[RMDB]
RNA sequence: GGGAACGACUCGAGUAGAGUCGAAAACGAUCCUCGAGAGAGGAUCGACGAGUCUUCGGACUCGAUUACCGCGCUGAUGUGCCGCGGGGCUACGAUGGUAUUGUGGGAAAGAAUACCAUUGUACCUUCUUGUCGUAGCCGAACAACUAGCACGUCGACAGUGGUGAGUAGUUCGCUACUCACCACUGAAAAGAAACAACAACAACAAC
Reactivity to DMS in 0.01 (KOAc 150mM, MgCl2 10mM, bicine 150mM(pH8.5), 24C), signal-to-noise 1, nucleotides 027 to 156: c070g020a020u000c010c000u000c010g000a300g000a240g030a020g020g000a000u000c000g000a060c000g000a020g010u000c020u000u010c300g040g010a010c020u000c000g030a090u000u000a300c010c010g060c000g000c000u040g040a010u000g000u040g000c010c020g000c010g020g010g000g000c030u000a000c020g000a040u000g020g010u020a020u000u030g040u050g000g000g000a160a070a270g010a190a150u000a080c000c000a000u000u030g020u040a010c010c000u000u000c180u010u030g010u010c000g020u000a040g020c000c000g030a060a020c070a060a130c070u000a080g010c000a010c000g000u000c000g020a290
Reactivity to 2A3 in 0.01 (KOAc 150mM, MgCl2 10mM, bicine 150mM(pH8.5), 24C), signal-to-noise 5, nucleotides 027 to 156: c020g010a000u000c000c000u000c020g020a040g010a010g000a000g050g000a000u000c000g000a010c010g000a000g010u010c000u020u190c270g070g000a000c000u000c000g000a050u140u150a100c000c000g000c000g000c030u100g000a000u010g000u000g000c000c000g020c010g000g060g000g000c000u000a000c000g010a020u160g000g000u000a000u010u060g010u020g000g010g050a080a280a090g170a120a090u110a110c000c000a000u010u030g000u000a000c000c000u180u230c100u120u290g040u020c000g000u000a010g000c010c000g010a060a020c040a020a050c020u090a010g000c000a000c000g010u000c000g010a020
An RNA of 207 nucleotides, treated with DMS and 2A3 and read out base by base. The reactions ran in a buffer of 150 mM KOAc, 10 mM MgCl2 and 150 mM bicine (pH 8.5), at 24 C.